Overview: The record gives the reactivity of an RNA of 177 nucleotides to DMS.
RNA sequence: GGGAACGACUCGAGUAGAGUCGAAAAGUUUUCCUCGCCCGGUCCUCCAUCCGCAGAGGGCACGGGUUUUCCGUCAAGCGACCGCACGUUCAAGAGGAGGUUAUGACAUGGCUUUUGAUUAUAAGAAGCAGAAACAGUCAUUCGUGACUGUUUCUGCAAAAGAAACAACAACAACAAC
Reactivity to DMS in 0.01 (KOAc 150mM, MgCl2 10mM, bicine 150mM(pH8.5), 24C), signal-to-noise 1, nucleotides 027 to 126: g000u020u000u000u010c030c040u000c250g000c000c000c020g010g010u010c010c010u010c010c000a210u030c090c070g020c120a220g000a000g010g010g000c000a030c020g020g010g000u010u010u010u010c050c140g010u000c070a080a180g010c110g030a130c090c050g010c090a110c050g000u000u000c100a130a190g000a080g010g010a030g010g010u000u000a060u020g000a020c080a060u000g020g000c050u000u000u000u000g010a070u000u020a120u000a090a140g030a140a090